[RMDB]
An RNA of 177 nucleotides, treated with DMS and 2A3 and read out base by base. High 2A3 reactivity points to a flexible backbone, as in loops and unpaired stretches. Source: RMDB library OK2TRN, as collected in RNAgym. DMS adducts were read by reverse transcription with MarathonRT. The reactions ran in a buffer of 150 mM KOAc, 10 mM MgCl2 and 150 mM bicine (pH 8.5), at 24 C.
RNA sequence: GGGAACGACUCGAGUAGAGUCGAAAAGACAGAGACAGACACAGUCUCAGUCUGUGUGUCUCUGUCAGAGACUGACACACACAGAGAGACUGUGUGUCACACACUCUGUCUGUGUCUGUCACUGACAACCUAGAGCGAAUUUCGAUUCGCUCUAGGUAAAAGAAACAACAACAACAAC
Reactivity to DMS in 0.01 (KOAc 150mM, MgCl2 10mM, bicine 150mM(pH8.5), 24C), signal-to-noise 4, nucleotides 027 to 126: g020a020c010a000g000a020g020a050c060a060g010a090c040a100c040a010g010u000c050u010c030a130g020u020c000u000g010u000g000u000g000u000c170u000c040u000g010u000c030a060g000a150g020a060c040u010g010a010c080a020c020a010c020a000c000a010g010a120g000a030g000a060c070u000g020u000g000u000g010u000c140a070c120a270c110a060c030u000c030u010g010u000c020u000g000u000g000u010c050u010g000u000c030a100c080u000g010a060c170a090
Reactivity to 2A3 in 0.01 (KOAc 150mM, MgCl2 10mM, bicine 150mM(pH8.5), 24C), signal-to-noise 3, nucleotides 027 to 126: g010a010c010a000g020a010g000a010c020a040g060a020c000a000c000a020g010u020c020u000c080a010g260u040c010u000g000u000g000u000g000u010c010u000c020u150g010u020c000a010g010a010g000a080c040u020g030a010c010a000c000a000c000a000c010a020g020a010g000a010g030a040c020u010g020u010g010u020g020u060c010a020c000a000c000a020c100u090c010u050g040u000c010u010g010u010g010u000c020u010g050u040c030a060c150u100g060a030c040a030